[RMDB]
RNA sequence: GGGAACGACUCGAGUAGAGUCGAAAAAACGCUGGGAGGACGUCACUUGGAUUUAGAAAGGGAGCAUGGCUGAAGCGCGCACGGCCAUGCGUUGAUCUUUCUUGUCAGUGAUACGUCCUCCUGUGCUGAAGCGCGCACGGCAACCGAAAGGUGCGAACACAUUGAAGAGGUUCGCCUCUUCAAUGUGAAAAGAAACAACAACAACAAC
Reactivity to 2A3 in 0.01 (KOAc 150mM, MgCl2 10mM, bicine 150mM(pH8.5), 24C), signal-to-noise 3, nucleotides 027 to 156: a010a000c040g010c020u020g000g000g000a010g020g020a000c010g000u000c010a030c060u140u270g220g000a030u290u220u040a020g000a000a000a000g000g000g000a010g010c000a000u000g000g020c010u040g020a230a070g010c010g000c000g000c000a010c000g000g010c000c000a000u000g000c000g010u010u000g000a000u000c010u000u000u000c000u010u000g040u040c150a150g000u000g000a080u040a100c000g000u010c000c000u000c000c000u000g000u010g000c010u010g020a100a050g000c010g000c000g000c000a010c000g000g000c010a000a020c000c000g060a080a030a020g030g010u040g020c030g010a130a040
Reactivity to DMS in 0.01 (KOAc 150mM, MgCl2 10mM, bicine 150mM(pH8.5), 24C), signal-to-noise 1, nucleotides 027 to 156: a050a040c040g010c010u010g010g020g000a040g050g030a030c010g000u000c020a020c030u000u010g060g000a040u030u010u000a050g000a020a040a000g010g000g020a050g020c030a010u000g000g020c000u000g050a020a030g020c020g020c030g060c040a300c070g010g000c010c000a020u000g010c020g000u000u000g020a010u000c000u010u000u000c000u020u000g020u010c060a100g010u010g020a020u000a030c080g030u010c020c010u000c000c010u010g010u000g010c000u000g010a080a050g010c020g040c020g010c020a300c040g020g010c000a070a110c020c020g010a150a110a110g030g020u000g060c020g000a120a170